Structure probing data (2A3 and DMS) for a 177-nucleotide construct. Source: RMDB library M2PK50, as collected in RNAgym. Values are in units of 0.01, from 0 to 300, in steps of 10. The RNA was probed in 150 mM KOAc, 10 mM MgCl2 and 150 mM bicine (pH 8.5) at 24 C. The DMS profile rests on 34,479 reads.

RNA sequence: GGGAACGACUCGAGUAGAGUCGAAAAAGUAUCGGGUUCGCCCGAUACUGUUGGCGCGCGGCCUUUGUCCUGUCGCGCGUUUAUUGCGCGCGAUAUACGCGCAUGUGGGGUCGUUCGCGACCCCAAACAGUAUAGUGAUUUUCGAAUCACUAUACUGAAAAGAAACAACAACAACAAC
Reactivity to 2A3 in 0.01 (KOAc 150mM, MgCl2 10mM, bicine 150mM(pH8.5), 24C), signal-to-noise 6, nucleotides 027 to 126: a000g000u000a000u000c000g000g020g030u050u080c180g070c030c000c000g000a000u000a000c000u000g010u020u120g020g010c020g000c000g000c010g010g070c010c010u090u100u150g060u050c010c010u020g010u010c010g000c000g000c000g010u000u040u040a130u050u120g010c000g000c000g000c000g010a030u030a020u030a180c010g020c000g090c020a020u120g090u110g130g010g000g000u010c010g010u030u040c110g010c020g070a010c000c000c000c000a000a000a000
Reactivity to DMS in 0.01 (KOAc 150mM, MgCl2 10mM, bicine 150mM(pH8.5), 24C), signal-to-noise 8, nucleotides 027 to 126: a010g010u000a000u000c000g010g010g010u000u010c240g010c000c000c000g010a000u000a000c000u000g010u000u000g000g000c020g000c010g010c010g010g000c010c110u000u000u010g010u010c100c090u000g010u000c000g010c000g000c000g000u000u000u010a030u010u010g000c000g010c000g020c030g010a090u010a070u010a080c010g010c010g020c020a030u010g010u000g010g010g010g020u000c000g020u000u010c190g020c010g010a020c000c000c000c000a000a010a060